Overview: An RNA of 177 nucleotides, treated with DMS and 2A3 and read out base by base. The data come from the RNA Mapping Database (RMDB), library OK2TST. Conditions: 150 mM KOAc, 10 mM MgCl2 and 150 mM bicine (pH 8.5), 24 C.
[RMDB]
RNA sequence: GGGAACGACUCGAGUAGAGUCGAAAAUUUAGCCACGAUAACCGCUUUGACAAGCCAAUCAAUAUGUUUCUCAUUUGCUAAACGAGAUGCACUAAUCAUCGCAUAUGGCUUUCUUGAUAAUUUAGGACGAAUACUGACACUUCGGUGUCAGUAUUCGAAAAGAAACAACAACAACAAC
Reactivity to DMS in 0.01 (KOAc 150mM, MgCl2 10mM, bicine 150mM(pH8.5), 24C), signal-to-noise 2, nucleotides 027 to 126: u000u000u020a060g000c020c090a110c170g000a110u000a040a160c100c160g040c070u020u000u000g050a120c140a140a020g020c010c080a070a120u010c090a080a110u000a090u000g010u000u000u020c010u010c050a230u000u010u000g020c110u040a030a060a100c090g000a000g000a030u000g030c020a100c120u000a050a110u000c110a040u000c100g030c100a090u000a090u000g000g030c010u000u000u020c050u020u010g020a070u000a040a110u030u000u000a120g000g000a250
Reactivity to 2A3 in 0.01 (KOAc 150mM, MgCl2 10mM, bicine 150mM(pH8.5), 24C), signal-to-noise 1, nucleotides 027 to 126: u060u050u020a010g010c010c000a010c040g000a040u010a080a050c000c020g040c100u100u000u220g050a050c020a040a040g000c000c020a050a020u140c020a030a080u120a050u120g050u010u040u020c040u010c020a130u030u090u130g150c090u190a100a090a000c060g000a000g010a050u020g000c020a020c100u070a090a060u050c070a000u060c030g000c170a070u050a080u120g030g000c000u030u030u050c010u010u120g080a140u060a300a140u060u060u120a050g080g040a020